[RMDB]
RNA sequence: GGGAACGACUCGAGUAGAGUCGAAAAGAUAUGGAUGCAAGGGACAUGAUAUACAGUCGGAAACGACUGUGAUAUCAACAGCCCUGCAUCCUAAGUCAAAAGGUAUCACUCUUCGGAGUGAUACCAACAAACGCAAGAAGUUCGCUUCUUGCGUUUGAAAAGAAACAACAACAACAAC
Reactivity to 2A3 in 0.01 (KOAc 150mM, MgCl2 10mM, bicine 150mM(pH8.5), 24C), signal-to-noise 4, nucleotides 027 to 126: g010a010u010a000u050g010g000a010u000g030c100a250a300g050g020g010a070c180a300u300g010a060u020a000u010a010c000a010g020u010c010g020g000a040a000a000c000g010a000c000u000g010u010g000a000u000a000u010c020a060a060c010a040g010c000c000c000u000g000c000a000u000c000c000u000a010a000g020u000c010a050a030a040a210g000g000u010a000u000c000a010c000u000c030u090u210c300g010g000a000g000u000g000a000u000a000c000c010a000a000
Reactivity to DMS in 0.01 (KOAc 150mM, MgCl2 10mM, bicine 150mM(pH8.5), 24C), signal-to-noise 3, nucleotides 027 to 126: g000a010u000a060u010g010g000a010u000g010c010a030a080g020g020g000a030c010a300u000g020a000u000a000u010a020c000a010g020u000c000g030g010a020a020a030c000g010a010c000u000g000u010g010a010u000a000u000c010a090a080c160a150g000c000c000c000u000g000c000a000u000c000c000u000a000a060g000u000c010a100a100a110a130g000g010u000a010u000c000a020c000u000c000u010u010c250g020g010a010g020u000g000a010u000a000c000c010a050a060

Annotation:
An RNA of 177 nucleotides, treated with 2A3 and DMS and read out base by base. 2A3 adducts were read by reverse transcription with SuperScript II with manganese. The RNA was probed in 150 mM KOAc, 10 mM MgCl2 and 150 mM bicine (pH 8.5) at 24 C. For DMS, 5,323 sequencing reads were counted. DMS adducts were read by reverse transcription with MarathonRT.